RNA sequence: GGGAACGACUCGAGUAGAGUCGAAAAUUGCUUAAGACCAACUCUGUUUUCGCCUUUGCCCCUUCAUCAUUAUACAAAAUGUCUACCAUUACCACACCCACACAUUGAUAUUAUGACUAAUUGUUUAUCGCGUAUUGCAAUUCGUUGCAAUACGCGAAAAAGAAACAACAACAACAAC
Reactivity to 2A3 in 0.01 (KOAc 150mM, MgCl2 10mM, bicine 150mM(pH8.5), 24C), signal-to-noise 2, nucleotides 027 to 126: u080u070g070c010u040u040a120a000g010a030c010c010a030a010c000u060c060u040g060u020u050u080u010c080g010c000c040u020u010u140g000c000c010c020c000u020u000c000a070u000c000a010u070u090a030u010a140c100a040a070a070a020u080g040u080c000u010a070c020c020a050u160u080a060c050c000a050c000a030c030c000c000a010c000a000c000a050u040u140g030a060u030a000u170u070a020u150g150a050c030u130a080a060u070u060g020u000u060u160a170
Reactivity to DMS in 0.01 (KOAc 150mM, MgCl2 10mM, bicine 150mM(pH8.5), 24C), signal-to-noise 1, nucleotides 027 to 126: u000u020g070c030u050u000a130a100g000a130c040c000a010a190c000u000c010u000g030u000u000u000u000c000g000c030c020u000u000u060g000c000c000c000c000u020u020c030a030u000c120a000u000u110a020u000a120c060a020a300a100a100u020g000u000c070u000a000c160c070a050u000u000a140c160c000a250c050a070c040c020c040a150c150a020c120a010u000u030g000a020u000a020u000u000a210u000g000a010c170u000a050a260u000u000g000u060u000u040a010